[RMDB]
RNA sequence: GGGAACGACUCGAGUAGAGUCGAAAAAAUAUUUAGUAUGAGAGGCAAUCAGAGGGCGCUAUCAUGCAAACUAGGAUUGUCUGCUCAUGCACAGAACCAACUACCGAUAACUAACAGUGCAUGAAGGGGACUACACUGAAUUCGUUCAGUGUAGUCCAAAAGAAACAACAACAACAAC
Reactivity to DMS in 0.01 (KOAc 150mM, MgCl2 10mM, bicine 150mM(pH8.5), 24C), signal-to-noise 2, nucleotides 027 to 126: a110a130u020a020u000u000u040a090g020u040a000u000g000a040g000a180g020g000c000a000a000u000c000a000g000a020g050g000g000c300g020c000u010a130u030c210a100u000g020c040a010a300a110c000u000a010g010g000a020u000u000g020u010c000u020g000c010u000c020a000u000g000c000a020c280a130g020a100a180c010c090a080a000c140u070a040c070c000g000a030u000a050a100c020u010a190a010c170a020g020u000g000c050a020u020g040a110a060g000g000
Reactivity to 2A3 in 0.01 (KOAc 150mM, MgCl2 10mM, bicine 150mM(pH8.5), 24C), signal-to-noise 3, nucleotides 027 to 126: a000a000u300a080u070u160u110a040g000u000a030u040g000a000g010a000g000g000c000a000a000u000c000a000g010a040g110g040g020c000g000c000u070a220u300c070a040u250g000c000a000a000a020c010u000a000g010g060a000u010u000g000u000c000u000g000c000u000c000a000u000g020c030a000c000a000g100a020a030c000c010a030a070c060u080a110c010c050g130a100u050a100a090c060u020a020a040c020a080g030u030g150c000a070u120g150a050a050g130g050